[RMDB]
RNA sequence: GGGAACGACUCGAGUAGAGUCGAAAAUACAAGUACGAAAGUACAAGCCUUAUCAGUUGGGCCUUCUGGUCAAAUUAGCGGUCACCCAGGAGGUCCUUCGCAUGAGGUCGACAAGCGCUAAAAGAAAUCAAGAGUACGUCUUCGGACGUACUCUUGAAAAAGAAACAACAACAACAAC
Reactivity to DMS in 0.01 (KOAc 150mM, MgCl2 10mM, bicine 150mM(pH8.5), 24C), signal-to-noise 1, nucleotides 027 to 126: u030a110c100a090a110g000u000a030c010g000a160a120a210g000u000a000c010a080a260g000c000c000u000u000a000u000c240a210g020u030u020g010g000g010c000c000u000u000c020u000g000g010u020c070a070a060a070u020u010a010g050c100g000g000u000c170a120c300c010c000a040g000g000a000g010g000u000c000c000u000u020c030g000c140a080u000g000a010g000g040u000c040g030a010c070a040a100g010c100g000c130u000a000a050a050a030g010a070a070a030